The data come from the RNA Mapping Database (RMDB), library OK3TST. This 207-nucleotide RNA was probed chemically with DMS and 2A3. Reactivities are rounded to 0.1 and cut off at 0 and 3. 2A3 adducts were read by reverse transcription with SuperScript II with manganese. Reactivities are given for positions 27 through 156. For 2A3, 2,181 sequencing reads were counted. DMS adducts were read by reverse transcription with MarathonRT.
RNA sequence: GGGAACGACUCGAGUAGAGUCGAAAAUUAAUGUGAAUGAAUGUUUAUUCGUGUUUGCUAGCUGUUUGCAUUUCUUCUUUUGCAUGUUUUUAGUAGUUCAUAAUCUUUGCUUACUUGUGAAGUCAUUUUACGGAAGUUAAAAGCAUUAUAGAAAUGAGAUUAAAUGCUGAUUCGUCAGCAUUUAAUCAAAAGAAACAACAACAACAAC
Reactivity to DMS in 0.01 (KOAc 150mM, MgCl2 10mM, bicine 150mM(pH8.5), 24C), signal-to-noise 2, nucleotides 027 to 156: u000u010a070a060u000g010u000g010a070a060u000g010a100a090u000g020u000u000u010a070u010u010c050g030u020g010u000u000u010g030c030u010a110g040c020u000g000u000u000u010g030c050a050u000u000u010c040u010u000c090u010u000u010u000g030c120a060u000g020u000u000u000u000u000a080g010u000a100g010u000u000c030a020u000a020a040u000c050u010u000u010g010c010u000u000a070c080u000u000g090u000g000a030a050g010u020c220a090u020u000u000u000a080c040g020g020a050a090g020u000u000a020a040a030a070g010c020a020u000u010a100u000a130g010a020a070a070u010g010a240
Reactivity to 2A3 in 0.01 (KOAc 150mM, MgCl2 10mM, bicine 150mM(pH8.5), 24C), signal-to-noise 4, nucleotides 027 to 156: u110u080a030a060u080g020u020g050a010a020u050g010a070a030u080g060u060u180u100a130u130u120c080g000u040g090u080u160u110g040c050u040a080g010c020u020g050u090u060u100g010c020a020u060u060u050c020u090u020c000u030u130u100u060g040c020a050u030g070u040u080u020u020u040a070g030u010a050g000u030u020c010a020u010a120a020u030c010u020u020u010g000c000u040u020a190c010u090u160g020u010g030a010a000g030u130c040a120u080u030u040u010a010c010g020g010a010a000g020u060u140a030a070a010a000g000c010a020u060u070a060u100a060g060a040a080a040u200g010a120